This 177-nucleotide RNA was probed chemically with DMS and 2A3. For 2A3, 2,071 sequencing reads were counted. For DMS the reverse transcriptase was MarathonRT. For 2A3 the reverse transcriptase was SuperScript II with manganese.
RNA sequence: GGGAACGACUCGAGUAGAGUCGAAAAAGGAGAUCCAGCAACGCUUGCUGGUCGCGGUUGCGCAGGACUUCCCGCCGGACUGUCGAAUCGGUUUCGGCGUCGAUGACGGCAAGCGACUGAUACGUCAGAUUUAAUCCACGUUCGCGUGGAUUAAAUCAAAAGAAACAACAACAACAAC
Reactivity to DMS in 0.01 (KOAc 150mM, MgCl2 10mM, bicine 150mM(pH8.5), 24C), signal-to-noise 3, nucleotides 027 to 126: a110g020g010a130g020a070u010c060c060a040g000c020a070a040c060g010c040u000u000g010c000u010g000g030u000c030g010c080g010g000u000u010g010c030g040c070a130g030g020a190c070u010u000c020c060c010g010c000c000g010g000a020c000u010g020u010c140g000a110a110u010c070g010g010u010u000u000c000g020g010c010g000u000c070g010a050u010g010a140c010g010g010c020a030a020g010c020g010a130c020u000g000a100u010a060c140g000u000c120a090
Reactivity to 2A3 in 0.01 (KOAc 150mM, MgCl2 10mM, bicine 150mM(pH8.5), 24C), signal-to-noise 3, nucleotides 027 to 126: a000g210g030a160g000a060u040c050c030a000g010c030a060a040c010g030c050u060u050g000c010u130g110g030u020c010g030c000g030g010u110u130g010c090g020c080a080g030g110a040c000u040u030c010c030c010g010c000c010g040g000a010c020u080g020u150c160g180a100a130u170c020g050g000u020u080u150c000g000g060c000g030u010c020g050a040u090g020a010c000g040g020c020a010a020g000c000g220a300c030u030g010a040u040a090c060g050u040c080a050